[RMDB]
Record summary:
This 207-nucleotide RNA was probed chemically with DMS and 2A3. For 2A3 the reverse transcriptase was SuperScript II with manganese. For DMS the reverse transcriptase was MarathonRT. For DMS, 2,934 sequencing reads were counted. Conditions: 150 mM KOAc, 10 mM MgCl2 and 150 mM bicine (pH 8.5), 24 C. The data come from the RNA Mapping Database (RMDB), library OK3TST.
RNA sequence: GGGAACGACUCGAGUAGAGUCGAAAAAACGUUUCAACUGUCGGGAUUGCCAAGUCUGCAAAUAGAAAAUCAAACGGUGGGCGGAUUAGGCUUGCCCACUGUACCGCAAUAUGCAGAAAGACCCAAUACGGGUGUGAUGUUAGCCCAGGGUUUAGGGCGAGAUACUUCCUUUCGAGGAAGUAUCUCGAAAAGAAACAACAACAACAAC
Reactivity to DMS in 0.01 (KOAc 150mM, MgCl2 10mM, bicine 150mM(pH8.5), 24C), signal-to-noise 2, nucleotides 027 to 156: a100a060c050g000u020u000u000c040a050a100c050u010g020u000c070g040g000g010a130u010u010g000c020c010a070a160g010u000c010u020g040c000a000a120a090u000a130g010a050a070a070a160u010c090a070a060a040c020g000g000u000g010g040g050c000g010g020a230u010u010a160g030g030c040u000u020g000c000c020c000a020c000u010g010u000a040c080c010g020c030a070a090u000a120u000g000c000a030g040a060a070a120g000a050c010c000c000a070a110u020a100c110g000g010g000u000g000u000g000a100u010g040u010u010a150g030c000c020c000a130g030g000g000u000u000u010a060g010g020g010
Reactivity to 2A3 in 0.01 (KOAc 150mM, MgCl2 10mM, bicine 150mM(pH8.5), 24C), signal-to-noise 3, nucleotides 027 to 156: a000a000c080g010u060u040u040c070a110a040c060u070g040u060c050g030g050g040a110u040u140g050c060c010a070a030g070u030c020u010g000c000a000a080a090u090a080g090a050a100a040a080u180c070a080a110a000c000g000g020u010g010g000g000c010g020g020a060u070u190a050g070g070c030u020u220g010c000c010c000a000c000u010g000u010a010c000c040g050c070a060a020u090a080u190g020c020a000g030a060a060a020g010a010c000c040c000a060a070u180a070c080g020g000g010u030g040u080g020a090u070g040u120u070a000g000c000c000c010a030g050g040g010u040u080u060a090g000g020g000